[RMDB]
RNA sequence: GGGAACGACUCGAGUAGAGUCGAAAAGAUAUGGAAUCAGUCAGGUUUAGGAUCGAAGAACUAACGUAACAUCCUUCGGAAACGAAGGUGGUUAGGGAGAUCGCUAAACCUGACUGAUUCCUAAGUCCCUUGUACAUCCGUUCGCGGAUGUACAAGGAAAAGAAACAACAACAACAAC
Reactivity to DMS in 0.01 (KOAc 150mM, MgCl2 10mM, bicine 150mM(pH8.5), 24C), signal-to-noise 1, nucleotides 027 to 126: g000a140u010a210u010g010g000a000a030u000c000a030g000u010c000a000g030g010u010u020u000a000g000g010a010u000c020g010a130a150g030a130a150c000u000a000a000c000g030u000a050a070c240a040u010c000c000u000u000c000g040g010a120a110a260c000g010a030a000g000g000u000g010g000u000u000a000g000g010g000a070g010a000u000c000g000c000u010a000a000a010c000c000u000g000a000c000u000g020a000u000u000c000c020u000a020a050g000u010c060